[RMDB]
RNA sequence: GGGAACGACUCGAGUAGAGUCGAAAACUUGAGUAUGGAACGAUCGCCCACGUAGAAGGAGGUUGCGAUGGAUUGCCCUGUUAGCUGUCUCUGAGGGUAGGGGGCGCGUUAAGAGUAUCCCCAUAGGAUAAAUAUAAAAAUUCGUUUUUAUAUUUAUAAAAGAAACAACAACAACAAC
Reactivity to DMS in 0.01 (KOAc 150mM, MgCl2 10mM, bicine 150mM(pH8.5), 24C), signal-to-noise 2, nucleotides 027 to 126: c000u000u030g000a100g000u010a070u020g000g010a040a030c030g010a020u030c030g020c030c000c030a080c040g020u020a100g000a180a260g000g020a050g000g000u010u000g010c000g000a120u000g030g000a260u030u030g020c150c040c010u000g000u010u000a140g000c040u000g000u000c000u010c000u000g010a160g000g000g010u040a110g000g000g000g000g000c020g000c010g020u000u000a080a150g000a090g030u010a060u000c020c000c020c100a180u020a090g010g010